[RMDB]
RNA sequence: GGGAACGACUCGAGUAGAGUCGAAAAGAUGGGUCCGAUGGAUUAAUGCGUCGCCUGCCAUUGGAUCCUGAUUGAUAGAUUGAUGGCGACGGUCGGAUCACUCGGUAAUUCGGUGCUCGACGAGUGAUCCGUGAUGAUAGUUAAGAUGAGCACCUAACCGUCAUAGGUAUUUCGAUACCUAUGACGGAAAAGAAACAACAACAACAAC
Reactivity to 2A3 in 0.01 (KOAc 150mM, MgCl2 10mM, bicine 150mM(pH8.5), 24C), signal-to-noise 3, nucleotides 027 to 156: g090a020u110g000g000g000u000c000c000g000a000u000g020g000a000u070u180a160a130u270g060c000g010u000c000g000c000c010u000g000c000c000a000u000u000g010g000a000u000c000c000u010g000a020u010u170g040a020u020a130g140a070u000u300g060a070u050g020g000c000g000a000c000g000g020u040c000g000g000a000u000c000a000c000u000c020g040g010u110a140a070u210u180c040g000g000u000g000c000u000c000g000a020c000g000a000g020u000g000a000u000c000c010g030u010g000a030u060g010a040u040a130g150u230u130a060a050g060a120u110g010a000g000c000a000c010c000u000a020a020

Chemical mapping of a 207-nucleotide RNA with 2A3.
2A3 adducts were read by reverse transcription with SuperScript II with manganese.
Values are in units of 0.01, from 0 to 300, in steps of 10.
Source: RMDB library OK3TST, as collected in RNAgym.
The 2A3 profile rests on 1,923 reads.
The reactions ran in a buffer of 150 mM KOAc, 10 mM MgCl2 and 150 mM bicine (pH 8.5), at 24 C.